Background
This 207-nucleotide RNA was probed chemically with DMS and 2A3. Source: RMDB library OK3TST, as collected in RNAgym. For 2A3 the reverse transcriptase was SuperScript II with manganese. Conditions: 150 mM KOAc, 10 mM MgCl2 and 150 mM bicine (pH 8.5), 24 C.

RNA sequence: GGGAACGACUCGAGUAGAGUCGAAAAGACUAGCCUGGGCAUGUUCUUCUCAUAGCAAUAGCUGAGGUCUAGCCUCCAAAGCAGCACACCUCACUUCCACCUCAUUCUGUCGCCCAAAGCAAGUUACGUGCCUGAACUCAGUGUAGCAGAGGCAGGGGAACUAGUAAGUCUUCGGACUUACUAGUUCAAAAGAAACAACAACAACAAC
Reactivity to DMS in 0.01 (KOAc 150mM, MgCl2 10mM, bicine 150mM(pH8.5), 24C), signal-to-noise 2, nucleotides 027 to 156: g020a110c030u000a040g020c030c000u000g020g000g030c000a120u000g030u000u000c030u000u000c080u000c060a190u000a140g010c040a040a110u000a080g010c120u010g010a030g020g000u000c090u000a130g030c040c010u000c010c050a040a070a130g050c100a070g080c050a100c050a030c040c000u010c060a090c020u000u010c030c020a080c030c010u010c100a080u000u000c040u000g020u000c050g000c000c010c010a070a060a130g000c120a040a120g020u000u000a100c090g000u000g020c020c030u000g000a090a040c040u010c030a160g020u000g020u010a060g030c000a070g010a080g000g020c000a060g010g010g000
Reactivity to 2A3 in 0.01 (KOAc 150mM, MgCl2 10mM, bicine 150mM(pH8.5), 24C), signal-to-noise 2, nucleotides 027 to 156: g030a030c030u050a020g050c030c030u020g000g020g010c040a040u090g040u090u030c020u110u040c090u020c100a100u140a010g020c050a110a110u030a120g030c060u060g030a050g030g000u070c040u040a020g030c010c000u010c020c030a070a060a040g020c010a010g010c010a000c010a000c030c000u000c000a030c030u070u000c010c020a090c020c000u060c020a050u120u020c040u050g060u050c050g010c010c010c000a050a040a010g040c050a070a020g030u090u080a090c090g020u080g020c000c000u050g080a130a080c010u040c080a080g050u070g060u210a040g040c020a010g000a000g020g040c010a000g060g000g010